[RMDB]
RNA sequence: GGGAACGACUCGAGUAGAGUCGAAAAAUGCGCACGACUAAUGUUGUCCUUGCUUUCCCUUUAAAUGGCCCAUUUGAUGAAGCAGUAAUAGUGGCUGAACUGCCCGAAGGGAGUGAGAUAAUUGAUACUUCAUGAUCUCUUUCGAGAGAUCAUGAAGAAAAGAAACAACAACAACAAC
Reactivity to 2A3 in 0.01 (KOAc 150mM, MgCl2 10mM, bicine 150mM(pH8.5), 24C), signal-to-noise 1, nucleotides 027 to 126: a030u060g000c040g020c000a030c130g130a020c070u160a250a000u170g080u090u010g010u080c010c000u030u020g000c010u050u060u040c000c000c100u010u050u010a020a020a010u120g080g010c090c000c010a060u080u010u130g110a110u020g030a060a010g020c020a000g070u040a010a040u110a040g080u060g110g000c010u010g060a030a020c030u010g010c040c010c000g040a030a050g030g000g000a030g010u040g030a030g000a100u210a140a040u100u100g050a020u080a120
Reactivity to DMS in 0.01 (KOAc 150mM, MgCl2 10mM, bicine 150mM(pH8.5), 24C), signal-to-noise 3, nucleotides 027 to 126: a060u000g020c070g020c220a080c190g000a030c050u000a110a130u010g020u010u000g000u000c060c060u000u000g010c030u000u000u000c020c000c000u000u000u020a040a040a070u000g000g010c010c020c020a110u000u010u010g010a130u010g010a130a090g000c020a040g000u000a070a160u010a070g020u000g010g010c030u000g000a080a060c110u000g020c000c020c050g000a070a070g000g010g010a080g010u000g000a030g000a070u010a040a070u000u010g000a200u010a140
The record gives the reactivity of an RNA of 177 nucleotides to 2A3 and DMS.
The DMS profile rests on 3,273 reads.
The reactions ran in a buffer of 150 mM KOAc, 10 mM MgCl2 and 150 mM bicine (pH 8.5), at 24 C.